[RMDB]
About this RNA: An RNA of 177 nucleotides, treated with DMS and read out base by base.
RNA sequence: GGGAACGACUCGAGUAGAGUCGAAAAGAUAUGGAAUCCAGGGAGUCCUCCAUCGGAAACGAUGGUUGGACGACGAUCUGGUUUGCAAUUCCUAAGUCAAAUCAAUUCUAGUUCGCUAGAAUUGAAACCACUUCUUAGUCUUCGGACUAAGAAGUGGAAAAGAAACAACAACAACAAC
Reactivity to DMS in 0.01 (KOAc 150mM, MgCl2 10mM, bicine 150mM(pH8.5), 24C), signal-to-noise 1, nucleotides 027 to 126: g000a160u000a010u000g010g030a010a020u010c000c000a020g010g000g000a020g010u000c000c010u020c010c010a000u000c000g010g000a070a120a120c010g020a000u000g000g000u020u000g030g030a020c000g010a060c300g000a060u020c010u000g000g010u000u020u000g020c160a100a120u010u000c000c000u000a090a170g000u010c090a070a090a120u000c010a010a010u000u000c010u000a030g020u000u010c210g010c000u010a010g000a000a000u000u010g000a000a130a200

Conditions: 150 mM KOAc, 10 mM MgCl2 and 150 mM bicine (pH 8.5), 24 C. The data come from the RNA Mapping Database (RMDB), library TTRDEL.